Structure probing data (DMS and 2A3) for a 177-nucleotide construct. The DMS profile rests on 1,431 reads. The data come from the RNA Mapping Database (RMDB), library OK2TRN. The RNA was probed in 150 mM KOAc, 10 mM MgCl2 and 150 mM bicine (pH 8.5) at 24 C.

[RMDB]
RNA sequence: GGGAACGACUCGAGUAGAGUCGAAAACUAGAAAAGUACAGGUACGAAUUGCCAUCAUUCAACGAUGACAUUCAGGGCACCGGUGCCGUCGUGAUGGCCUCGUUGAUUGCUGCUUUGAAACAUACCAUCACUGAGUGAUCUUCGGAUCACUCAGUGAAAAAGAAACAACAACAACAAC
Reactivity to DMS in 0.01 (KOAc 150mM, MgCl2 10mM, bicine 150mM(pH8.5), 24C), signal-to-noise 2, nucleotides 027 to 126: c020u000a100g020a120a060a060a020g020u010a110c180a070g020g000u000a060c050g000a070a070u000u020g000c080c040a010u000c030a060u030u010c120a050a040c070g010a040u000g000a030c000a000u000u000c030a200g000g000g010c040a060c080c170g000g000u000g000c000c030g020u000c010g000u010g000a000u000g000g000c030c110u000c020g010u000u000g000a040u000u000g020c140u000g020c040u020u000u000g000a150a100a040c130a060u010a080c050c040a110
Reactivity to 2A3 in 0.01 (KOAc 150mM, MgCl2 10mM, bicine 150mM(pH8.5), 24C), signal-to-noise 2, nucleotides 027 to 126: c000u040a020g210a000a230a000a000g090u130a070c050a050g010g000u020a000c020g090a090a040u140u110g030c050c000a030u010c000a020u030u150c030a030a000c000g000a010u010g000a020c000a010u070u160c050a020g090g000g010c050a010c200c210g120g030u030g000c010c000g150u150c040g070u080g000a000u000g020g000c000c040u030c010g010u010u040g060a070u030u110g040c000u010g030c000u000u000u070g080a120a120a010c020a030u070a040c000c020a010